RNA sequence: GGGAACGACUCGAGUAGAGUCGAAAAUUACCGCCCAGGAUGGGGUGCAGCGUUCCUGCAAUAUCCAGGGCACAUAGGUGCAGCCUUGUAGUUUUAGUGGACUUUAGGCUAAAGAAUUUCACUAGCAAAAAUCUUUAAGGGUUCGCCCUUAAAGAAACGAUAUACGAAGCUUCGGCUUCGUAUAUCGAAAAGAAACAACAACAACAAC
Reactivity to 2A3 in 0.01 (KOAc 150mM, MgCl2 10mM, bicine 150mM(pH8.5), 24C), signal-to-noise 2, nucleotides 027 to 156: u070u040a020c010c010g000c000c000c000a020g020g010a010u030g020g050g090g110u050g010c000a010g000c050g090u120u110c000c010u000g010c000a020a010u060a030u080c010c000a010g010g000g180c030a010c030a030u270a040g080g010u090g020c020a010g020c000c020u030u040g080u120a050g000u000u000u020u040a020g000u020g020g000a010c010u070u070u020a020g040g010c010u060a070a140a000g080a090a070u060u180u160c010a020c030u050a010g030c050a010a060a110a160a300u010c000u000u000u000a010a010g030g000g040u030u100c140g060c030c020c020u000u000a000a000a000g000a000a000a000
Chemical mapping of a 207-nucleotide RNA with 2A3. Conditions: 150 mM KOAc, 10 mM MgCl2 and 150 mM bicine (pH 8.5), 24 C.